[RMDB]
RNA sequence: GGGAACGACUCGAGUAGAGUCGAAAAUGUUAAUAACUUUCUCACUGCCAUAACCAAAUGUCUGAUAAGAACAUACUUCAGAAAGGAAGGGUUUCUUUUGGGCUUAUAGUCUGACAGGAUCCAAUUCACCCCUAUUGUACUUCGGUACAAUAGGGGUAAAAGAAACAACAACAACAAC
Reactivity to DMS in 0.01 (KOAc 150mM, MgCl2 10mM, bicine 150mM(pH8.5), 24C), signal-to-noise 2, nucleotides 027 to 126: u000g020u000u000a160a110u020a100a180c050u010u000u020c010u000c010a070c030u010g000c060c010a020u010a070a050c050c050a020a090a090u010g020u000c000u010g000a050u010a030a050g000a040a020c090a090u000a130c060u000u010c010a040g020a090a170a140g010g020a020a040g000g010g000u000u000u000c000u010u010u000u000g000g000g000c020u000u000a040u020a030g030u010c120u010g010a040c040a010g000g000a070u000c080c050a030a120u000u010c130
Reactivity to 2A3 in 0.01 (KOAc 150mM, MgCl2 10mM, bicine 150mM(pH8.5), 24C), signal-to-noise 1, nucleotides 027 to 126: u080g000u000u040a110a040u180a140a100c010u030u090u060c020u020c020a060c030u080g020c030c000a100u010a140a040c060c010a040a040a150u150g000u080c030u020g020a040u030a120a030g010a060a010c030a040u130a070c020u010u040c010a070g200a200a070a010g120g010a000a030g080g010g000u030u000u050c000u010u040u020u040g030g010g000c000u000u100a190u140a110g040u010c010u010g040a040c010a010g000g020a010u030c010c010a030a000u140u160c040